[RMDB]
RNA sequence: GGGAACGACUCGAGUAGAGUCGAAAACUCAAUGUAGGGAAUAACAUUGAAUUGAUACAAAUACCUUUUUCGGUGUAGGGAAAAACACCAAAUUGAUACAAAUACCUUUCUCAAUGUAGGGAAUAACAAAACAGGCAUCGCUUCGGCGAUGCCUGAAGACUAUUCAGCGGUUCGCCGCUGAAUAGUCAAAAGAAACAACAACAACAAC
Reactivity to 2A3 in 0.01 (KOAc 150mM, MgCl2 10mM, bicine 150mM(pH8.5), 24C), signal-to-noise 2, nucleotides 027 to 156: c010u010c010a000a040u060g030u080a070g080g070g110a100a230u110a060a040c000a010u000u010g040a090a140u070u110g040a070u100a140c080a120a140a040u150a080c010c000u040u030u000u020u140c070g010g010u010g010u010a060g050g010g050a000a130a000a080a000c010a010c000c000a000a030a070u070u070g050a060u040a110c040a040a020a020u080a050c010c000u000u070u050c040u020c020a060a070u160g030u070a020g000g000g020a010a040u040a040a070c070a030a040a000a020c000a000g010g000c020a000u000c000g080c070u150u190c190g030g000c000g000a000u000g000c000c000u000g000a040a000